[RMDB]
RNA sequence: GGGAACGACUCGAGUAGAGUCGAAAAGCGUAGUAUAAGGUGGCAUGCGAUUAUGCAAACAUCGAGGUCCUGGAAAAACCGAUGUAAAAUAAAUAACAGCACCCGUUUAGCGAGCGUGGUGAUAGGCUAAAUGUCUACAAUUCGUUGUAGACAUUUAAAAAGAAACAACAACAACAAC
Reactivity to DMS in 0.01 (KOAc 150mM, MgCl2 10mM, bicine 150mM(pH8.5), 24C), signal-to-noise 9, nucleotides 027 to 126: g010c060g020u000a040g010u010a060u010a070a090g000g020u000g000g020c050a060u010g010c050g010a100u010u020a050u020g010c070a130a110a300c020a010u000c010g000a080g000g000u020c110c020u000g000g000a070a090a060a050a030c040c020g000a020u000g000u020a050a020a030a030u020a020a030a040u020a030a040c060a050g000c040a020c010c010c010g000u000u000u000a110g010c130g010a120g010c020g010u030g020g010u000g000a090u020a050g010g010c150
Reactivity to 2A3 in 0.01 (KOAc 150mM, MgCl2 10mM, bicine 150mM(pH8.5), 24C), signal-to-noise 9, nucleotides 027 to 126: g040c030g030u060a010g030u030a110u050a180a060g070g020u040g030g030c040a030u060g010c040g110a120u100u120a060u250g030c030a040a060a030c000a020u010c010g010a020g020g040u180c040c020u020g010g000a060a040a010a020a010c010c010g010a010u050g080u220a020a030a020a020u170a020a030a030u250a040a020c020a010g010c000a010c000c000c000g010u020u040u050a060g010c080g020a010g000c010g020u120g010g010u010g020a080u110a050g060g000c010
The record gives the reactivity of an RNA of 177 nucleotides to DMS and 2A3. Values cover nucleotides 27 to 126.